[RMDB]
RNA sequence: GGGAACGACUCGAGUAGAGUCGAAAAAUAUCCAUCCCUCUCCUGAGGUGGGUAGAGCAAGUGUCUUUCGUUUAUUAAUUCGACAAAUAUUGGCUAUACAUAUUUGAUAGGCAGGGACUGUACUACACAUUACUUAUGCCUUCGGGCAUAAGUAAUGAAAAGAAACAACAACAACAAC
Reactivity to DMS in 0.01 (KOAc 150mM, MgCl2 10mM, bicine 150mM(pH8.5), 24C), signal-to-noise 5, nucleotides 027 to 126: a110u010a070u000c020c040a150u000c020c010c020u000c150u010c100c090u000g010a070g000g020u000g000g010g020u000a030g000a110g010c070a060a050g000u000g010u000c020u000u000u000c050g010u010u000u000a090u020u010a060a150u000u000c060g020a100c050a030a020a030u010a040u010u000g010g000c080u000a080u010a100c040a040u000a030u000u000u000g000a100u000a050g000g000c220a050g010g010g010a060c040u000g010u000a060c050u000a060c170a170
Reactivity to 2A3 in 0.01 (KOAc 150mM, MgCl2 10mM, bicine 150mM(pH8.5), 24C), signal-to-noise 3, nucleotides 027 to 126: a000u080a040u030c010c000a060u090c010c010c000u040c030u020c010c090u100g020a020g010g060u050g020g010g030u040a040g000a020g010c020a090a030g060u010g040u060c010u040u100u040c040g050u040u060u050a130u040u140a250a170u120u090c020g030a010c030a030a070a010u100a060u110u100g040g000c030u060a030u010a200c030a040u060a060u070u060u070g050a040u040a030g050g000c010a010g050g000g030a020c020u060g030u100a040c010u050a020c030a000